This 177-nucleotide RNA was probed chemically with DMS and 2A3. The DMS profile rests on 10,405 reads. For 2A3 the reverse transcriptase was SuperScript II with manganese. The RNA was probed in 150 mM KOAc, 10 mM MgCl2 and 150 mM bicine (pH 8.5) at 24 C. For 2A3, 14,417 sequencing reads were counted.

RNA sequence: GGGAACGACUCGAGUAGAGUCGAAAAGGAGGGCAGCGAAGCUGUCGAGCACGAGACCAAGAUGCUGAUUCCGGCAGUCGUUAGAGGCCGGUUUAGCGACGCUAUAAGCAUCGGUCGAGUGCCUCCAGGGACGGUGCGGCUUCGGUCGCGUCGUCCCAAAAGAAACAACAACAACAAC
Reactivity to DMS in 0.01 (KOAc 150mM, MgCl2 10mM, bicine 150mM(pH8.5), 24C), signal-to-noise 4, nucleotides 027 to 126: g010g000a040g020g010g000c000a000g010c040g010a130a070g030c010u000g010u000c000g000a040g000c000a020c000g000a300g000a030c000c020a120a140g030a020u000g020c000u000g000a220u030u010c030c030g000g030c010a070g000u000c010g010u010u030a060g000a050g000g010c020c010g000g000u000u010u000a010g010c020g010a110c140g000c000u010a030u010a170a010g000c010a010u000c000g010g030u000c010g000a250g000u010g000c020c010u010c000c000a150
Reactivity to 2A3 in 0.01 (KOAc 150mM, MgCl2 10mM, bicine 150mM(pH8.5), 24C), signal-to-noise 4, nucleotides 027 to 126: g020g000a000g000g010g000c010a010g000c050g120a130a020g000c000u000g000u010c000g000a020g000c000a000c000g010a010g000a000c000c000a070a060g000a010u000g000c010u010g010a040u090u030c010c020g010g010c010a020g100u060c030g010u010u060a040g010a030g050g070c020c020g000g000u000u000u010a000g000c000g090a030c100g000c010u010a010u010a110a010g000c000a010u000c010g010g000u000c000g000a000g000u000g000c000c000u010c000c020a020